[RMDB]
RNA sequence: GGGAACGACUCGAGUAGAGUCGAAAAAUCGGUAUUCCAUCAUGUGGAUGUGCUAUUUAACCAGUCCUCUGGGGUGAACAUUUAGAUGGUUUCCAGUAUUUACUACUGCAAACAGUUCUGCAGUUCAUGCAUGUGCAAGUGCAUCUGUAGGAUAAAAUAAAUCGACUCAUUUCGAUGAGUCGAUUUAAAAAGAAACAACAACAACAAC
Reactivity to DMS in 0.01 (KOAc 150mM, MgCl2 10mM, bicine 150mM(pH8.5), 24C), signal-to-noise 2, nucleotides 027 to 156: a040u000c080g020g020u000a090u000u000c010c030a100u010c070a120u000g040u020g000g000a060u000g030u010g040c010u020a090u000u000u000a080a140c010c010a140g030u010c080c110u000c050u010g050g010g020g000u000g030a070a060c040a050u010u000u000a120g020a060u000g040g000u000u000u000c070c020a050g000u000a040u000u010u010a090c110u010a060c000u000g010c020a050a030a060c060a110g000u000u000c010u000g040c010a040g020u000u000c060a020u000g000c000a040u000g030u000g020c300a100a180g020u000g000c000a050u010c020u000g000u000a020g010g010a040u000a040a050a060a200
Reactivity to 2A3 in 0.01 (KOAc 150mM, MgCl2 10mM, bicine 150mM(pH8.5), 24C), signal-to-noise 3, nucleotides 027 to 156: a000u120c060g040g020u080a060u020u020c000c010a000u010c030a040u180g060u100g160g000a050u010g040u060g000c020u070a140u160u140u050a110a070c020c000a020g140u220c020c050u110c020u020g020g010g020g020u070g050a050a010c000a010u040u110u110a060g000a010u040g040g020u000u040u010c030c000a010g030u020a070u020u130u060a100c080u020a010c030u030g080c030a090a140a060c020a070g040u000u040c010u000g010c000a010g020u020u160c060a010u030g030c000a000u060g090u100g220c060a180a100g000u000g010c010a020u000c030u010g010u020a000g000g020a010u080a050a060a010a010
Structure probing data (DMS and 2A3) for a 207-nucleotide construct.
Conditions: 150 mM KOAc, 10 mM MgCl2 and 150 mM bicine (pH 8.5), 24 C.
It was measured as part of the RMDB library OK3TST.
Reactivities are given for positions 27 through 156.
The DMS profile rests on 3,832 reads.